[RMDB]
RNA sequence: GGGAACGACUCGAGUAGAGUCGAAAAGCGUACUACCUCGCGUAUAGCUUGGAUUUACUUAGCAUCGAGAUACCUGAUGUAGUAAGUCCCAAAUAGGACUUACGCAGAUAUCAGGUAUCUCGAUGCUAAGUUGUCAGCUAUACAGCGAGGUAUCGCACCAGUCUAUUAUCUUCGGAUAAUAGACUGGAAAAGAAACAACAACAACAAC
Reactivity to DMS in 0.01 (KOAc 150mM, MgCl2 10mM, bicine 150mM(pH8.5), 24C), signal-to-noise 1, nucleotides 027 to 156: g010c020g030u010a090c080u000a030c000c000u020c030g020c010g000u010a010u000a000g010c000u000u000g030g000a070u000u000u000a030c000u000u000a010g000c000a010u000c000g010a030g000a040u010a010c010c000u000g020a010u010g010u010a230g010u010a000a010g000u000c000c000c000a030a100a300u000a060g040g000a060c010u000u000a010c020g030c120a170g010a090u000a050u010c000a030g000g020u000a000u000c010u000c000g000a000u000g000c000u010a000a010g010u010u010g010u000c030a050g000c010u000a030u010a020c020a070g040c020g010a020g000g010u000a000u000c010g030c010a300